Conditions: 150 mM KOAc, 10 mM MgCl2 and 150 mM bicine (pH 8.5), 24 C. Structure probing data (2A3 and DMS) for a 177-nucleotide construct. The DMS profile rests on 1,635 reads. 2A3 adducts were read by reverse transcription with SuperScript II with manganese. For DMS the reverse transcriptase was MarathonRT.
[RMDB]
RNA sequence: GGGAACGACUCGAGUAGAGUCGAAAAAGUGAAAUGCCAUUUCUAUUUAUAACAAUUUGAUAACUAGAAUUGUAACUUUGCUUAUUUGUCUCAGUUUUUUGCGUGGGUGAGAGGUAGAAGAGGGUAGGCAGUAAGAACUGUUCGCAGUUCUUACUGCAAAAGAAACAACAACAACAAC
Reactivity to 2A3 in 0.01 (KOAc 150mM, MgCl2 10mM, bicine 150mM(pH8.5), 24C), signal-to-noise 1, nucleotides 027 to 126: a000g050u020g000a010a040a010u080g020c000c010a000u060u040u020c010u010a010u050u060u050a100u030a220a040c070a130a140u160u160u300g020a000u010a000a010c010u010a000g010a030a030u030u000g020u010a050a090c010u000u040u030g020c020u090u080a100u140u160u080g060u020c000u010c010a140g030u070u010u010u040u250u200g000c020g010u030g000g060g020u050g040a010g010a000g040g000u060a030g000a160a030g000a030g020g020g000u010a030g050
Reactivity to DMS in 0.01 (KOAc 150mM, MgCl2 10mM, bicine 150mM(pH8.5), 24C), signal-to-noise 1, nucleotides 027 to 126: a010g020u000g000a000a010a040u000g020c190c020a010u000u000u000c000u000a010u000u000u020a020u000a100a140c070a130a160u010u020u030g000a030u000a010a010c050u000a020g000a000a000u000u010g000u000a120a070c110u010u000u000g010c000u000u000a120u010u010u010g010u000c020u000c030a150g030u010u000u000u000u000u010g020c060g000u010g000g000g010u010g000a060g000a080g020g010u010a040g000a030a060g010a080g000g010g010u020a060g010